[RMDB]
RNA sequence: GGGAACGACUCGAGUAGAGUCGAAAAGGUGAGCUGGACGGGAAGUAGCUCCAGCGACUGCGUCCGAAGCUUUGAUAAGAGCAACUCCAUCUACGUUGCUCAAGUAGGUGGUAGCAGCAAACACCGAAUCCUGACCAUACUUCGGUAUGGUCAGGAUAAAAGAAACAACAACAACAAC
Reactivity to DMS in 0.01 (KOAc 150mM, MgCl2 10mM, bicine 150mM(pH8.5), 24C), signal-to-noise 3, nucleotides 027 to 126: g000g010u000g000a160g000c010u000g000g000a070c010g030g000g010a100a090g020u050a100g000c080u010c000c030a050g000c000g030a280c010u000g010c030g040u020c010c000g000a280a170g000c020u000u010u040g000a110u030a140a150g000a010g040c000a030a060c030u020c110c100a160u040c120u020a080c180g020u000u070g010c110u000c040a060a060g000u000a010g010g010u030g020g000u030a090g010c020a050g030c100a060a070a290c020a030c040c000g000a100
Reactivity to 2A3 in 0.01 (KOAc 150mM, MgCl2 10mM, bicine 150mM(pH8.5), 24C), signal-to-noise 4, nucleotides 027 to 126: g040g030u010g010a020g000c000u010g000g000a000c050g070g030g140a200a090g060u150a030g000c030u000c000c000a000g000c000g000a020c010u020g000c000g030u000c040c030g040a110a020g000c010u040u120u160g150a170u100a200a120g010a010g040c010a020a000c000u080c030c010a110u040c050u070a040c050g110u120u090g040c020u040c020a030a000g020u020a000g000g040u050g030g050u090a040g010c000a010g000c010a030a050a090c000a000c000c000g050a010
Annotation: Chemical mapping of a 177-nucleotide RNA with DMS and 2A3. DMS adducts were read by reverse transcription with MarathonRT. Source: RMDB library OK1LIB, as collected in RNAgym. The RNA was probed in 150 mM KOAc, 10 mM MgCl2 and 150 mM bicine (pH 8.5) at 24 C. High DMS reactivity at an A or C suggests that its Watson-Crick edge is free. The DMS profile rests on 4,118 reads. The 2A3 profile rests on 2,519 reads.